[RMDB]
RNA sequence: GGGAACGACUCGAGUAGAGUCGAAAAAUAGGAUGCGGGGGCUUCACCGCCUACCAACUCCUGAUAAACUCCGAAUGCUAUAAAAUAUACACAGCAGUGAGGGCAUGGGUGCUAAGGUCCAUGUCCGACGGGGUCAUACUUUCGAGUAUGACCCCGUAAAAGAAACAACAACAACAAC
Reactivity to 2A3 in 0.01 (KOAc 150mM, MgCl2 10mM, bicine 150mM(pH8.5), 24C), signal-to-noise 3, nucleotides 027 to 126: a000u210a010g000g020a000u000g010c000g000g000g000g000g000c000u000u040c110a090c020c060g000c000c000u300a300c000c000a000a000c000u000c000c010u000g000a050u080a070a170a040c080u030c010c010g020a030a050u080g000c020u040a020u050a170a150a050a020u290a020u080a060c080a010c030a070g010c000a000g080u030g140a060g000g000g080c000a000u000g010g000g020u140g040c100u170a090a010g110g000u020c000c000a000u000g010u000c000c000g000
Reactivity to DMS in 0.01 (KOAc 150mM, MgCl2 10mM, bicine 150mM(pH8.5), 24C), signal-to-noise 2, nucleotides 027 to 126: a030u020a050g020g000a000u010g000c300g000g040g000g000g040c000u000u000c140a100c300c140g000c000c000u000a210c000c000a020a300c300u010c010c020u020g000a110u040a020a130a130c100u010c000c040g010a030a000u060g010c020u030a170u050a080a000a100a100u030a090u100a170c160a000c080a000g000c010a040g040u060g060a060g000g000g000c010a000u000g000g000g000u060g000c200u060a050a080g060g010u000c000c000a000u020g000u000c000c020g000